[RMDB]
Chemical mapping of a 177-nucleotide RNA with 2A3 and DMS.
The RNA was probed in 150 mM KOAc, 10 mM MgCl2 and 150 mM bicine (pH 8.5) at 24 C.
For 2A3, 3,642 sequencing reads were counted.
Reactivities are given for positions 27 through 126.
RNA sequence: GGGAACGACUCGAGUAGAGUCGAAAAGAUAUGGACUACCCACCUCAAGAACUACCGAUUAUUGUCGGAAACGACAAGAAUCGGCUUGAGAGGUCCUAAGUCAAACUGCCGACUUCGGUCGGCAGAAGGCAUUAAUACUGUUCGCAGUAUUAAUGCCAAAAGAAACAACAACAACAAC
Reactivity to 2A3 in 0.01 (KOAc 150mM, MgCl2 10mM, bicine 150mM(pH8.5), 24C), signal-to-noise 2, nucleotides 027 to 126: g010a010u150a100u190g000g000a010c020u170a200c040c030c000a040c020c000u000c000a010a050g000a110a120c110u120a110c300c000g000a000u010u010a030u090u000g020u030c010g030g020a100a010a020c000g020a010c000a010a000g030a000a020u000c000g040g000c000u000u030g000a020g000a000g030g000u010c000c010u060a300a080g070u140c060a060a030a090c020u010g020c010c010g010a030c020u050u060c230g080g000u010c030g000g300c020a000g000a000a010
Reactivity to DMS in 0.01 (KOAc 150mM, MgCl2 10mM, bicine 150mM(pH8.5), 24C), signal-to-noise 3, nucleotides 027 to 126: g020a110u000a160u000g000g000a010c010u000a150c040c020c010a300c040c000u000c000a020a030g030a080a040c060u020a300c030c010g000a000u020u000a090u000u020g000u000c000g000g000a050a050a190c000g010a010c000a000a000g000a000a020u000c000g010g000c000u000u000g000a030g010a160g000g000u000c000c000u000a100a120g000u000c070a080a140a300c030u000g000c000c010g030a030c000u000u010c130g020g020u000c010g020g010c010a000g010a030a070